[RMDB]
RNA sequence: GGGAACGACUCGAGUAGAGUCGAAAAACCCCUGUAGUGACAAGGGCAGGGACCCUACCCCCAUCAUCAGGCACAGCCAGGAUCCUGGCAGGUGAUGGCACCAAGUUGGAUCUCAAAGGACAAGUGGGAGUGAAGCAAAGACGGGCAGGGAGUCUGCAUAUUGGAGAAGAUUCGUCUUCUCCAAUAUAAAAGAAACAACAACAACAAC
Reactivity to 2A3 in 0.01 (KOAc 150mM, MgCl2 10mM, bicine 150mM(pH8.5), 24C), signal-to-noise 3, nucleotides 027 to 156: a000c040c010c000c010u070g030u180a110g060u100g200a080c100a120a060g020g010g020c010a010g020g010g100a100c000c000c000u010a050c010c010c030c020c000a010u020c010a010u000c010a020g190g000c100a040c040a150g000c010c000a000g000g040a060u100c030c020u030g000g000c030a020g010g000u020g020a020u030g010g000c070a050c020c040a120a040g030u040u030g040g030a060u000c030u010c100a090a100a040g050g010a040c020a160a000g010u050g040g020g020a070g020u070g060a050a010g000c040a060a020a030g030a030c030g020g000g010c010a010g040g000g000a020g030u020c010u000g000c020
Reactivity to DMS in 0.01 (KOAc 150mM, MgCl2 10mM, bicine 150mM(pH8.5), 24C), signal-to-noise 3, nucleotides 027 to 156: a060c000c010c000c040u000g010u000a090g030u000g030a190c050a080a080g010g010g030c030a080g000g000g000a090c030c030c030u010a100c020c030c020c000c010a050u000c030a040u010c020a060g000g000c110a080c080a170g010c000c010a090g020g010a100u000c110c000u020g010g020c030a230g010g020u000g010a080u000g020g010c040a090c050c050a060a200g030u000u000g000g000a110u000c020u000c040a100a090a150g030g000a080c040a070a080g010u000g000g020g000a080g010u000g010a090a110g030c050a060a050a130g020a100c050g010g020g030c030a070g000g040g010a150g010u000c030u000g020c200
This 207-nucleotide RNA was probed chemically with 2A3 and DMS. 2A3 adducts were read by reverse transcription with SuperScript II with manganese. It was measured as part of the RMDB library OK3TST. Reactivities are given for positions 27 through 156.